Record summary: An RNA of 177 nucleotides, treated with DMS and 2A3 and read out base by base. For 2A3 the reverse transcriptase was SuperScript II with manganese. Source: RMDB library TTRDES, as collected in RNAgym. For DMS the reverse transcriptase was MarathonRT.

RNA sequence: GGGAACGACUCGAGUAGAGUCGAAAAGAUAUGGAAUGAACUGUAGGGAGCUCAUACUCGGAAACGAGUAUCGAGCAUCGAUCUAUUUCAUUCCUAAGUCAAACACUGAGCCUUCGGGCUCAGUGAAUCUAAUAAGACUGUUCGCAGUCUUAUUAGAAAAAGAAACAACAACAACAAC
Reactivity to DMS in 0.01 (KOAc 150mM, MgCl2 10mM, bicine 150mM(pH8.5), 24C), signal-to-noise 6, nucleotides 027 to 126: g000a020u000a060u010g000g000a010a010u000g000a010a030c300u010g010u000a010g010g010g000a130g040c010u010c010a020u000a000c010u000c000g000g000a020a020a030c000g020a010g010u000a000u000c230g020a010g020c000a070u000c270g010a090u000c000u000a020u000u000u000c000a010u000u000c000c000u020a010a110g010u000c010a200a100a200c010a010c000u000g000a010g000c000c000u000u010c300g030g020g020c000u010c000a000g010u000g010a060a050
Reactivity to 2A3 in 0.01 (KOAc 150mM, MgCl2 10mM, bicine 150mM(pH8.5), 24C), signal-to-noise 4, nucleotides 027 to 126: g000a000u040a000u040g000g010a010a000u000g000a030a040c190u200g050u120a040g050g060g130a110g030c000u010c000a000u000a010c000u000c000g000g000a010a010a000c000g000a010g000u010a000u030c190g010a000g000c000a000u140c080g030a120u000c010u010a010u020u030u010c000a000u010u020c000c000u000a010a000g010u010c010a060a090a080c010a000c000u000g000a000g000c010c020u060u180c300g130g010g000c010u000c000a000g000u000g000a010a010